[RMDB]
RNA sequence: GGGAACGACUCGAGUAGAGUCGAAAAACUGGGGUCUAGUUUAGGCGAAAAGAACGUUUUACAAAACUCCAAACCACCGGAUGUGCCUCUGAAAACAUGUGCCUGGACACACAAGUGCGUAAAACAACUUAGAACCAUUUUUCGAAAUGGUUCUAAGAAAAGAAACAACAACAACAAC
Reactivity to DMS in 0.01 (KOAc 150mM, MgCl2 10mM, bicine 150mM(pH8.5), 24C), signal-to-noise 4, nucleotides 027 to 126: a050c130u010g000g030g000g000u010c030u000a240g020u010u010u000a050g010g010c020g000a070a100a150a150g000a100a140c050g040u000u000u010u000a060c040a040a090a170a040c020u000c020c010a040a060a080c050c020a040c030c030g020g000a070u010g010u020g010c020c030u000c040u000g000a100a020a070a080c110a070u010g010u010g000c020c020u010g020g000a080c070a030c050a040c120a060a050g000u000g040c070g000u010a020a040a080a020c090a060a160
Reactivity to 2A3 in 0.01 (KOAc 150mM, MgCl2 10mM, bicine 150mM(pH8.5), 24C), signal-to-noise 6, nucleotides 027 to 126: a000c020u010g010g000g000g000u020c020u010a050g020u060u110u060a070g050g000c040g060a070a120a070a060g110a090a040c030g000u000u020u020u050a030c030a000a080a000a010c010u020c010c010a040a040a050c020c000a010c000c020g030g010a060u060g040u070g030c000c010u030c010u060g070a030a060a020a050c030a050u110g020u020g040c000c010u030g030g020a030c010a000c010a000c010a090a070g050u050g080c050g050u110a010a040a060a060c050a040a040